[RMDB]
RNA sequence: GGGAACGACUCGAGUAGAGUCGAAAAUGCUGCAGAAUGGAUAAAUCUGAGAAUGCCAAGUGUGAGGCAGAUGAGGAGAACGCAGCUAUGCUUGGAAACACAAAUAAAGCAGGAGAAACCAUUGAUGCCAUUCAAAAAGCUGAGGGCACUAGUAAGAUGAUUAGUAAAUGUUCGCAUUUACUAAUCAAAAAGAAACAACAACAACAAC
Reactivity to DMS in 0.01 (KOAc 150mM, MgCl2 10mM, bicine 150mM(pH8.5), 24C), signal-to-noise 5, nucleotides 027 to 156: u010g030c000u000g020c000a110g010a140a100u010g000g020a100u000a080a080a110u010c030u000g010a160g010a110a130u000g010c010c030a080a130g030u010g030u000g000a160g020g020c040a050g000a110u000g010a190g030g010a140g000a070a160c080g010c060a040g020c040u000a090u000g010c010u000u010g010g000a140a070a090c050a090c050a080a090a120u000a070a080a100g000c040a070g030g000a110g000a090a110a120c040c020a120u000u000g010a130u000g020c040c020a070u000u000c060a050a080a070a080a120g020c050u000g010a100g010g010g020c030a040c020u010a070g010u000a060a120g010a210
Reactivity to 2A3 in 0.01 (KOAc 150mM, MgCl2 10mM, bicine 150mM(pH8.5), 24C), signal-to-noise 7, nucleotides 027 to 156: u050g000c000u020g000c000a030g050a140a060u080g030g040a050u060a140a130a040u040c040u060g030a040g090a130a040u060g030c020c020a080a070g030u060g000u040g120a070g010g000c020a010g030a110u110g020a030g020g020a050g000a050a020c070g000c030a010g000c010u030a050u060g020c010u030u030g030g020a080a140a010c060a020c030a090a130a120u200a100a080a010g010c020a010g000g050a040g060a030a040a000c020c020a020u010u090g020a020u050g020c020c010a020u050u040c040a070a070a040a040a010g020c060u030g010a040g010g020g000c020a000c040u040a010g070u120a040a050g120a120
An RNA of 207 nucleotides, treated with DMS and 2A3 and read out base by base. Conditions: 150 mM KOAc, 10 mM MgCl2 and 150 mM bicine (pH 8.5), 24 C. For DMS, 11,286 sequencing reads were counted. For 2A3 the reverse transcriptase was SuperScript II with manganese. For DMS the reverse transcriptase was MarathonRT. Source: RMDB library OK3TST, as collected in RNAgym.